About this RNA:
The record gives the reactivity of an RNA of 177 nucleotides to 2A3 and DMS. DMS adducts were read by reverse transcription with MarathonRT. Reactivities are rounded to 0.1 and cut off at 0 and 3. The DMS profile rests on 4,749 reads. High 2A3 reactivity points to a flexible backbone, as in loops and unpaired stretches.

RNA sequence: GGGAACGACUCGAGUAGAGUCGAAAAUAAUUAAUUUGAAGUCGGUGUGGGAGUUCUGGGUACCCGUGAUCGACAUUCUUUGACUUAUAAUUCUUACAUAUCACGAACUUGGAAUUCGAUUAAAAAGAUAUAUGCUGCAUUUCGAUGCAGCAUAUAUAAAAGAAACAACAACAACAAC
Reactivity to 2A3 in 0.01 (KOAc 150mM, MgCl2 10mM, bicine 150mM(pH8.5), 24C), signal-to-noise 4, nucleotides 027 to 126: u110a010a080u180u140a030a050u070u030u160g020a020a010g010u010c040g060g010u040g020u100g070g070g030a080g100u090u170c100u140g160g030g060u140a160c000c000c000g010u030g110a010u040c020g010a000c040a020u040u020c020u010u130u060g070a070c020u060u120a030u060a250a150u090u010c030u050u070a100c090a120u170a020u140c060a030c050g020a030a000c070u060u070g030g040a100a060u090u000c020g070a080u090u220a080a070a060a030a030g150
Reactivity to DMS in 0.01 (KOAc 150mM, MgCl2 10mM, bicine 150mM(pH8.5), 24C), signal-to-noise 3, nucleotides 027 to 126: u020a070a060u040u010a070a060u000u010u000g010a040a110g000u000c010g020g000u010g020u000g010g020g000a080g000u000u000c050u010g000g010g030u060a110c110c020c000g010u000g010a020u000c060g000a030c080a070u020u000c020u000u000u000g000a150c210u000u020a050u010a050a170u020u010c020u010u010a120c100a130u040a100u010c110a080c040g000a040a020c060u010u030g010g000a030a140u000u000c010g000a150u020u030a040a100a080a100a080g000